[RMDB]
RNA sequence: GGGAACGACUCGAGUAGAGUCGAAAAUGGUUCGGUUCGCCGAACCAAAAAAAUCCUAAGUCUACGGGAGCGUGCACAGUGGAGUCGGAAACGACGUUGAAACUGAGCACGCGAAGAACGUAGAUAUGGAAAAAAUAUACAAGUUCGCUUGUAUAAAGAUUGACUUAUUGUUCGCAAUAAGUCAAUCAAAAGAAACAACAACAACAAC
Reactivity to DMS in 0.01 (KOAc 150mM, MgCl2 10mM, bicine 150mM(pH8.5), 24C), signal-to-noise 1, nucleotides 027 to 156: u030g000g010u010u010c000g060g000u000u020c300g030c000c020g010a000a060c010c000a000a000a000a060a010a030a040u000c010c000u020a100a180g050u000c000u000a020c020g000g000g000a230g000c000g080u020g020c000a220c000a000g000u010g000g000a300g000u000c020g000g010a160a250a150c000g000a040c010g040u000u010g010a140a110a080c000u010g000a160g020c000a000c000g000c000g000a040a080g030a190a140c010g010u000a010g000a010u000a160u000g000g000a000a000a090a150a090a110u000a000u000a010c000a040a010g000u000u000c300g000c050u000u000g000u010a040u000a070a170a150